[RMDB]
An RNA of 177 nucleotides, treated with DMS and 2A3 and read out base by base.

RNA sequence: GGGAACGACUCGAGUAGAGUCGAAAAUCAUCGUUGAUGGGGCUUUGGGCAAACCAGCAAUAAUUGCGACUUCAGACAAUGUUAAUUCAUUGAGUUUUUUACCAAAGUAAGUCUUAGCUGCCGCAGCUGAUUAAGUCUGUUUCGACAGACUUAAUCAAAAAGAAACAACAACAACAAC
Reactivity to DMS in 0.01 (KOAc 150mM, MgCl2 10mM, bicine 150mM(pH8.5), 24C), signal-to-noise 7, nucleotides 027 to 126: u010c050a060u010c070g020u000u000g020a060u000g010g000g010g020c050u000u000u000g010g010g010c180a040a070a090c090c060a090g010c040a070a080u000a090a080u010u000g010c050g010a060c090u000u000c100a120g010a170c040a020a020u000g000u010u010a080a100u010u000c020a030u000u000g000a140g000u000u000u000u010u010u000a110c040c040a050a060a090g010u010a050a080g010u000c030u000u000a090g000c020u000g010c060c050g010c070a050g010c100
Reactivity to 2A3 in 0.01 (KOAc 150mM, MgCl2 10mM, bicine 150mM(pH8.5), 24C), signal-to-noise 4, nucleotides 027 to 126: u040c020a010u060c040g120u070u140g050a070u080g000g010g000g010c000u110u090u040g030g020g010c030a090a030a040c020c000a030g040c040a010a050u160a140a070u090u080g020c020g020a010c010u060u020c100a050g020a180c010a020a030u010g000u060u080a100a050u280u060c020a000u020u020g000a070g070u000u020u030u090u110u180a100c030c020a050a020a000g030u050a080a050g010u070c010u020u040a020g000c010u030g060c050c050g110c050a010g000c040
The RNA was probed in 150 mM KOAc, 10 mM MgCl2 and 150 mM bicine (pH 8.5) at 24 C. For 2A3 the reverse transcriptase was SuperScript II with manganese. For 2A3, 3,617 sequencing reads were counted. High 2A3 reactivity points to a flexible backbone, as in loops and unpaired stretches. It was measured as part of the RMDB library OK2TST.